[RMDB]
The record gives the reactivity of an RNA of 207 nucleotides to 2A3. Values are in units of 0.01, from 0 to 300, in steps of 10. It was measured as part of the RMDB library M2RFPK.

RNA sequence: GGGAACGACUCGAGUAGAGUCGAAAAGAAAGAAAGAAAGUUCAUUGUUUAUCGGAAACUUUAAACUAUAACCAUUCAAACUUUCCCAGAAGUUAGUUUGAAUAGAAAUUAAAAAGAAACUUCUGAAUAACCUUAUCAUGCUUCGGCAUGAUAAGAACACUCAACGAUAGUUCGCUAUCGUUGAGUGAAAAGAAACAACAACAACAAC
Reactivity to 2A3 in 0.01 (KOAc 150mM, MgCl2 10mM, bicine 150mM(pH8.5), 24C), signal-to-noise 1, nucleotides 027 to 156: g050a020a030a010g080a020a080a000g040a070a240a030g030u100u070c090a060u090u140g120u070u170u110a100u190c060g070g030a070a030a050c000u030u040u090a120a100a010c000u040a020u060a280a050c010c010a000u000u010c020a010a000a000c000u010u000u000c020c030c020a000g010a000a000g010u000u000a010g000u000u020u000g010a010a060u060a200g020a010a080a010u220u290a100a090a020a000a000g020a000a000a000c000u010u000c000u010g010a030a030u090a080a010c010c000u000u000a000u000c010a000u000g030c000u090u050c220g110g000c010a000u000g000a000u000a000a000g000a010a000